Source: RMDB library OK2TRN, as collected in RNAgym. This 177-nucleotide RNA was probed chemically with DMS and 2A3. For DMS the reverse transcriptase was MarathonRT.
RNA sequence: GGGAACGACUCGAGUAGAGUCGAAAAUUGCCAUUCGUAUAAGCGAUAUACUAUACCAACAGCCUGCCAUAACUCUUCUAAAGUAGAUAAUAUUGAUCCACUUUUAAGUGGUUCAAUCCCUACUCUAUAUUGUCAAACUGUUCGCAGUUUGACAAUAAAAAGAAACAACAACAACAAC
Reactivity to DMS in 0.01 (KOAc 150mM, MgCl2 10mM, bicine 150mM(pH8.5), 24C), signal-to-noise 3, nucleotides 027 to 126: u000u010g030c020c030a140u000u000c110g020u000a070u000a060a090g020c050g000a070u010a090u010a070c050u000a100u010a070c010c030a050a090c070a060g020c030c040u000g020c030c040a060u000a070a120c100u010c080u000u000c090u010a080a060a050g010u010a030g000a040u010a070a080u000a060u000u000g000a010u000c000c000a010c000u000u000u000u020a060a060g070u000g000g010u000u000c010a010a010u000c120c060c010u000a040c060u000c070u000a140
Reactivity to 2A3 in 0.01 (KOAc 150mM, MgCl2 10mM, bicine 150mM(pH8.5), 24C), signal-to-noise 3, nucleotides 027 to 126: u080u100g040c030c000a050u090u080c050g010u090a100u020a220a170g070c020g020a020u020a000u000a170c060u090a050u060a110c020c020a040a060c000a030g060c030c010u070g000c010c000a020u040a150a100c020u010c010u170u020c040u160a100a090a070g050u020a010g030a040u110a110a040u070a090u060u000g000a010u010c000c000a030c030u110u150u050u120a150a080g010u020g000g000u000u000c000a000a010u020c010c000c000u000a000c000u000c000u030a050

2A3 adducts were read by reverse transcription with SuperScript II with manganese.